[RMDB]
RNA sequence: GGGAACGACUCGAGUAGAGUCGAAAAUAUCAGCCGGGUCGUCGGGGUUCGAGCUGGCAGCGCACGGUCAAGGAGCAGCGUCGCGCAAUUCUGGCGCGGCUGCAUCGGACGCCCAGCCUGCAGCCGAACCGUGCUUAGUCUUCGGACUAAGCACGGUAAAAGAAACAACAACAACAAC
Reactivity to DMS in 0.01 (KOAc 150mM, MgCl2 10mM, bicine 150mM(pH8.5), 24C), signal-to-noise 3, nucleotides 027 to 126: u000a090u000c060a210g000c080c020g020g000g050u000c020g030u010c040g010g020g010g000u000u000c010g020a130g020c010u000g020g010c040a020g010c230g040c030a150c300g010g010u000c010a100a300g000g000a060g010c020a040g000c010g000u010c060g000c000g010c010a070a150u000u000c210u000g020g010c040g060c000g000g000c000u010g000c000a050u000c070g000g000a290c240g010c020c020c150a270g000c040c000u000g000c010a050g020c000c030g020a060
Reactivity to 2A3 in 0.01 (KOAc 150mM, MgCl2 10mM, bicine 150mM(pH8.5), 24C), signal-to-noise 1, nucleotides 027 to 126: u080a000u000c010a000g040c060c000g020g030g050u010c000g010u000c000g090g010g000g020u030u060c030g020a050g090c020u050g180g000c030a000g000c000g020c070a090c060g080g000u060c030a000a040g090g010a030g050c000a000g000c000g280u210c020g060c000g030c020a060a150u300u100c100u230g160g050c030g000c000g040g000c000u010g000c010a120u050c010g000g000a000c020g000c010c020c020a030g000c020c000u010g000c000a010g000c010c010g000a000
The record gives the reactivity of an RNA of 177 nucleotides to DMS and 2A3. The data come from the RNA Mapping Database (RMDB), library OK2TRN. Values cover nucleotides 27 to 126. For DMS the reverse transcriptase was MarathonRT. For 2A3 the reverse transcriptase was SuperScript II with manganese.